[RMDB]
RNA sequence: GGGAACGACUCGAGUAGAGUCGAAAAAUUUAUGAGUGUACGAUAGUGGCUUCACAUUAUUUGUUUUAAGUUACCGUUGAGAAUUUGGUUCUCAGUAAUCUAGAGCUACUAUUUUAGCAGAAUUAUACAUGGGAUGCAGAAUAGAAGCUUUUAAGCACUAUGGGGAUUUAUUCGUAAAUCCCCAUAGAAAAGAAACAACAACAACAAC
Reactivity to 2A3 in 0.01 (KOAc 150mM, MgCl2 10mM, bicine 150mM(pH8.5), 24C), signal-to-noise 2, nucleotides 027 to 156: a000u150u170u080a170u140g010a010g040u090g010u060a100c070g010a020u000a030g010u000g020g000c040u040u040c070a000c020a090u080u150a140u060u150u110g130u050u150u030u100a030a010g030u010u020a050c080c140g040u050u080g000a030g010a050a020u120u110u230g090g000u080u040c010u020c000a010g020u020a020a050u030c080u040a020g000a000g000c020u030a010c000u010a050u030u070u070u030a000g000c010a000g000a030a030u020u020a020u030a040c020a010u090g050g010g020a020u100g000c000a000g040a090a040u220a140g060a230a020g000c000u050u020u030u070a020a040g010c040a000
Reactivity to DMS in 0.01 (KOAc 150mM, MgCl2 10mM, bicine 150mM(pH8.5), 24C), signal-to-noise 1, nucleotides 027 to 156: a090u020u000u010a080u010g010a120g030u010g030u000a030c130g000a060u010a030g020u000g030g010c010u000u010c110a060c080a040u010u010a020u020u010u010g070u000u000u000u000a070a140g000u010u000a030c030c030g000u000u010g000a100g030a020a040u010u000u010g040g030u010u020c010u010c020a080g030u010a020a100u010c070u020a070g010a080g010c010u000a050c130u000a020u000u010u000u010a100g030c010a010g020a240a100u000u000a050u000a040c020a040u010g020g010g000a060u000g000c010a060g020a060a060u010a100g050a080a130g000c000u010u000u000u010a030a050g020c060a180